This 207-nucleotide RNA was probed chemically with 2A3. The RNA was probed in 150 mM KOAc, 10 mM MgCl2 and 150 mM bicine (pH 8.5) at 24 C. Values cover nucleotides 27 to 156. The 2A3 profile rests on 351 reads.
RNA sequence: GGGAACGACUCGAGUAGAGUCGAAAAUUCUUGGAAAGGAAUUGUUCCGAAUGUAUUUACGGAGUUUUGUCACUUCCACAAAUCUUUAUAAAUAUUGUUCUUCCUAAUUACAUACGCGCAGCGCUAGUUGUUGCGAAAGAAUAUUUGAGAGAAAAAACACCUACUAUCGUUUCGACGAUAGUAGGUGAAAAGAAACAACAACAACAAC
Reactivity to 2A3 in 0.01 (KOAc 150mM, MgCl2 10mM, bicine 150mM(pH8.5), 24C), signal-to-noise 1, nucleotides 027 to 156: u000u020c000u020u020g020g060a270a000a020g130g020a010a010u040u110g060u210u000c060c030g020a020a030u000g000u030a100u090u100u030a000c020g050g000a000g000u000u000u070u030g030u030c090a100c140u190u010c060c000a000c050a110a030a030u000c020u010u120u110a200u160a150a040a070u130a030u270u250g020u020u020c000u080u070c000c020u030a160a150u060u060a030c030a060u060a070c000g020c030g060c160a100g020c030g030c130u150a010g020u180u050g000u000u100g040c030g050a100a130a000g050a060a090u100a030u190u190u100g010a010g050a000g000a000a050a000a190a000a000